The data come from the RNA Mapping Database (RMDB), library OK2TST.
An RNA of 177 nucleotides, treated with DMS and 2A3 and read out base by base.
The 2A3 profile rests on 2,308 reads.
The reactions ran in a buffer of 150 mM KOAc, 10 mM MgCl2 and 150 mM bicine (pH 8.5), at 24 C.
High DMS reactivity at an A or C suggests that its Watson-Crick edge is free.
For DMS, 2,462 sequencing reads were counted.
RNA sequence: GGGAACGACUCGAGUAGAGUCGAAAACUUCAUACGCGACGACCUGCCUGUACCUGCUGAGGAGAUCGAACAAUUACGCGGCAACCCGACCCUAGUGGCGACCAUCCAGAACGCCCUGCAGGAGGAGAUGGACACAGAUAUUCGUAUCUGUGUCCAUAAAAGAAACAACAACAACAAC
Reactivity to DMS in 0.01 (KOAc 150mM, MgCl2 10mM, bicine 150mM(pH8.5), 24C), signal-to-noise 3, nucleotides 027 to 126: c070u010u000c070a090u000a100c080g020c040g000a130c070g010a110c050c010u000g000c030c030u010g010u010a080c050c040u010g040c040u010g000a080g000g020a100g000a040u000c040g010a100a070c110a020a080u010u010a090c110g020c060g000g020c060a080a120c060c020c010g000a090c050c020c040u020a060g020u000g020g000c030g000a100c100c030a090u010c060c060a080g000a100a120c080g020c020c010c030u000g010c050a050g000g000a070g010g010a120g010
Reactivity to 2A3 in 0.01 (KOAc 150mM, MgCl2 10mM, bicine 150mM(pH8.5), 24C), signal-to-noise 2, nucleotides 027 to 126: c000u130u100c080a070u080a150c020g010c030g060a080c020g040a050c040c020u100g060c040c000u080g110u100a110c020c020u060g000c030u020g040a030g060g010a040g020a130u040c060g030a050a020c010a120a120u180u100a050c050g000c010g070g010c020a040a020c010c000c010g050a070c040c010c010u060a070g000u040g060g010c000g040a020c030c000a040u090c010c000a030g000a130a010c010g000c000c000c000u020g000c020a010g040g030a030g050g020a070g030